[RMDB]
The record gives the reactivity of an RNA of 177 nucleotides to DMS.
For DMS, 1,079 sequencing reads were counted.
Reactivities are rounded to 0.1 and cut off at 0 and 3.
It was measured as part of the RMDB library OK1LIB.
For DMS the reverse transcriptase was MarathonRT.
RNA sequence: GGGAACGACUCGAGUAGAGUCGAAAAGAAUCGGCUGCAACAGCGGCAGGUCCUGGGUCAGAAACAUGUAGUAAUGGGUGUUGCCGGUGUAGCCCGGAGACGUGGGCAACGGCACGGCAUUGGCAACCUUUGAAGGGGCCUUCGGGCCCCUUCAAAGAAAAGAAACAACAACAACAAC
Reactivity to DMS in 0.01 (KOAc 150mM, MgCl2 10mM, bicine 150mM(pH8.5), 24C), signal-to-noise 1, nucleotides 027 to 126: g030a070a000u000c000g000g050c010u000g000c050a080a200c300a100g010c000g000g000c020a010g000g040u000c020c000u040g000g060g010u000c110a050g000a110a060a080c090a040u000g000u000a010g000u050a080a040u000g000g000g000u030g020u090u000g000c000c000g000g040u000g040u000a030g090c000c110c120g010g010a150g000a020c040g080u010g040g000g000c040a010a120c110g010g020c050a040c010g000g000c040a080u050u000g000g000c070a080a110c040